[RMDB]
RNA sequence: GGGAACGACUCGAGUAGAGUCGAAAAUUUAGGGAUGCAGAGGGCCGUAUGACACCAUACUGCCAUGAUCCUACUGUUUUGCCUGGGGCUUUUGCGUACAGUCAGAUGAGGCCUCAUGUUCGUUACGGUCAUCAAAAUUGUUCGCAAUUUUGAUGACAAAAGAAACAACAACAACAAC
Reactivity to DMS in 0.01 (KOAc 150mM, MgCl2 10mM, bicine 150mM(pH8.5), 24C), signal-to-noise 2, nucleotides 027 to 126: u000u010u000a160g000g010g020a010u010g030c060a080g020a160g010g020g040c010c110g030u000a020u000g000a210c300a100c300c020a010u000a010c010u010g000c000c010a080u000g010a060u000c000c000u000a120c210u010g000u000u000u000u000g010c040c000u000g030g010g000g000c070u010u010u000u000g010c170g000u010a110c160a050g010u010c100a110g000a130u000g000a060g000g000c000c010u000c040a060u000g000u000u000c090g010u000u010a090c220g020
Reactivity to 2A3 in 0.01 (KOAc 150mM, MgCl2 10mM, bicine 150mM(pH8.5), 24C), signal-to-noise 1, nucleotides 027 to 126: u110u090u140a130g030g060g000a040u110g200c000a030g040a160g210g020g000c030c000g000u010a010u030g110a050c000a000c110c030a010u040a020c000u000g000c020c000a010u030g020a000u000c000c010u000a050c070u030g040u020u070u000u020g000c020c010u000g050g010g080g030c010u100u010u000u160g000c030g050u080a220c080a110g090u080c030a060g040a170u070g040a000g080g000c000c030u020c060a030u130g090u000u090c150g000u000u060a070c080g040